[RMDB]
RNA sequence: GGGAACGACUCGAGUAGAGUCGAAAAGAUAUGGAAUACAUACCUCCUUGAAGGUGGACUCGGAAACGAGUCGUAACAUCUGGAGAGGUGUAUUCCUAAGUCAAACCCGAGUCUUCGGACUCGGGAACGUUUGGAUAGAGUUCGCUCUAUCCAAACGAAAAGAAACAACAACAACAAC
Reactivity to DMS in 0.01 (KOAc 150mM, MgCl2 10mM, bicine 150mM(pH8.5), 24C), signal-to-noise 2, nucleotides 027 to 126: g000a030u010a300u010g020g010a000a020u000a020c010a050u000a120c050c000u000c010c020u000u010g000a050a050g020g010u010g000g010a000c000u000c000g040g010a120a110a150c000g010a000g000u000c000g030u010a070a140c020a040u020c010u000g010g000a060g000a050g000g050u000g000u010a010u000u000c000c000u000a010a080g000u010c010a080a070a180c010c000c000g000a000g000u000c000u000u020c150g030g000a010c000u010c000g000g000g010a000a000
Reactivity to 2A3 in 0.01 (KOAc 150mM, MgCl2 10mM, bicine 150mM(pH8.5), 24C), signal-to-noise 2, nucleotides 027 to 126: g000a010u060a030u150g020g020a010a000u030a020c020a020u190a300c010c000u030c010c020u110u300g210a130a060g050g030u030g020g000a000c000u000c020g000g000a060a020a000c000g010a000g010u000c000g010u060a080a040c000a020u010c030u050g090g080a160g050a050g120g000u010g010u000a000u010u000c000c000u000a040a010g020u020c020a070a080a150c010c000c000g010a000g000u010c020u130u290c300g180g000a010c020u010c000g020g010g000a010a030